[RMDB]
RNA sequence: GGGAACGACUCGAGUAGAGUCGAAAAGAGCCGACAGAGAAGUCGGGAAGCGACGAGAGAGAAUAGAAUACAUUGGAAUUCGAGAUACUGACACAAAAUGACAGACGUCGCCAUAUUCUCAGAGAAGAUACUCAGGUGGGUUCGCCCACCUGAGUAUAAAAGAAACAACAACAACAAC
Reactivity to 2A3 in 0.01 (KOAc 150mM, MgCl2 10mM, bicine 150mM(pH8.5), 24C), signal-to-noise 2, nucleotides 027 to 126: g010a060g160c010c040g000a000c030a010g230a020g120a250a030g010u020c000g000g000g030a000a030g020c000g000a000c030g000a020g000a000g000a050g000a220a020u080a080g030a020a040u120a080c040a050u100u230g050g040a080a010u070u040c070g000a010g010a100u080a020c010u010g010a030c000a000c000a170a070a100a010u110g030a000c010a030g070a030c000g000u030c000g000c030c000a010u030a080u100u010c010u000c000a070g050a000g000a160a000g070
Reactivity to DMS in 0.01 (KOAc 150mM, MgCl2 10mM, bicine 150mM(pH8.5), 24C), signal-to-noise 2, nucleotides 027 to 126: g000a150g050c000c000g000a010c000a160g000a160g020a110a140g020u000c000g030g000g010a090a180g020c010g000a000c000g030a140g000a230g000a190g010a190a040u010a220g050a110a000u020a040c160a130u110u010g030g020a110a060u000u000c010g000a110g030a110u000a190c020u030g030a140c050a020c110a040a050a040a180u020g020a120c040a030g010a220c050g010u000c000g030c000c110a080u030a080u000u010c000u010c000a160g000a250g020a090a110g080
This 177-nucleotide RNA was probed chemically with 2A3 and DMS. DMS adducts were read by reverse transcription with MarathonRT. Source: RMDB library OK1LIB, as collected in RNAgym. The RNA was probed in 150 mM KOAc, 10 mM MgCl2 and 150 mM bicine (pH 8.5) at 24 C.